Chemical mapping of a 177-nucleotide RNA with DMS and 2A3. For DMS, 7,900 sequencing reads were counted. Reactivities are given for positions 27 through 126. The reactions ran in a buffer of 150 mM KOAc, 10 mM MgCl2 and 150 mM bicine (pH 8.5), at 24 C. The 2A3 profile rests on 8,101 reads. High DMS reactivity at an A or C suggests that its Watson-Crick edge is free.
[RMDB]
RNA sequence: GGGAACGACUCGAGUAGAGUCGAAAAAGAAAUAGAUGAAGUAGGAGGCUGUUAGCGCUCUAGUGUGUCUUCAGAUAAGAUAAGUCUGGCCUACUUCAUCGGAUACAUAGGACCAACGCUAAAAAAACGUUAAAAGGAUAUUCGUAUCCUUUUAACGAAAAGAAACAACAACAACAAC
Reactivity to DMS in 0.01 (KOAc 150mM, MgCl2 10mM, bicine 150mM(pH8.5), 24C), signal-to-noise 6, nucleotides 027 to 126: a070g010a080a080a110u020a130g010a020u000g010a020a020g010u000a020g000g010a260g010g010c030u010g010u010u000a040g020c040g010c060u010c130u000a070g020u010g010u000g010u000c020u000u000c090a050g010a080u010a070a070g000a110u000a090a070g020u000c010u000g010g010c010c010u000a010c000u000u000c010a000u000c010g010g010a080u000a040c140a060u000a080g010g000a130c040c050a060a060c110g000c070u000a000a000a060a090a060a070a130
Reactivity to 2A3 in 0.01 (KOAc 150mM, MgCl2 10mM, bicine 150mM(pH8.5), 24C), signal-to-noise 5, nucleotides 027 to 126: a000g080a010a040a010u150a040g000a010u000g010a010a010g010u010a000g000g030a010g050g040c050u040g040u250u110a030g010c030g040c040u050c100u130a110g060u060g010u020g010u110c000u040u030c040a020g040a170u150a130a060g030a050u070a110a020g040u010c020u040g170g020c000c000u000a000c000u000u020c010a000u000c000g000g000a010u010a010c050a040u120a030g050g030a010c020c020a060a020c070g080c140u220a020a080a000a000a000a010a100